[RMDB]
The record gives the reactivity of an RNA of 177 nucleotides to 2A3 and DMS. Reactivities are given for positions 27 through 126. The reactions ran in a buffer of 150 mM KOAc, 10 mM MgCl2 and 150 mM bicine (pH 8.5), at 24 C. The 2A3 profile rests on 21,769 reads.

RNA sequence: GGGAACGACUCGAGUAGAGUCGAAAACUUCCUCGGGCUUUGGUGGGUGCUCCUGGCCAGGGCCUGGCUGAGUGGGCAGGUGGCGUGAGCCGAGCACCGCCUGGCAUCCCUGCCUGGCCAUGGGGGGCUGAUAACUUCUUUUCGAAGAAGUUAUCAGAAAAGAAACAACAACAACAAC
Reactivity to 2A3 in 0.01 (KOAc 150mM, MgCl2 10mM, bicine 150mM(pH8.5), 24C), signal-to-noise 9, nucleotides 027 to 126: c010u100u060c010c000u010c020g030g020g010c130u300u210u210g030g010u090g090g030g030u050g040c010u050c040c070u080g060g010c000c000a020g040g010g000c000c020u020g010g010c010u090g080a250g080u300g020g010g060c020a030g010g050u050g060g090c130g060u090g040a040g050c030c050g000a010g010c010a030c020c020g020c000c000u000g010g010c010a120u050c010c010c010u020g030c000c010u020g020g010c020c020a070u080g010g000g010g000g000g010
Reactivity to DMS in 0.01 (KOAc 150mM, MgCl2 10mM, bicine 150mM(pH8.5), 24C), signal-to-noise 7, nucleotides 027 to 126: c280u000u000c020c000u000c040g010g000g010c050u000u000u000g010g020u010g010g010g010u000g010c090u000c020c070u000g010g000c020c020a050g010g010g010c030c010u000g000g010c050u010g010a110g030u010g010g000g000c010a030g010g020u000g010g020c040g000u010g010a290g020c040c040g010a100g010c030a040c030c050g000c000c000u000g010g010c040a100u000c030c020c020u000g000c000c000u000g000g010c000c010a060u000g010g000g000g000g000g010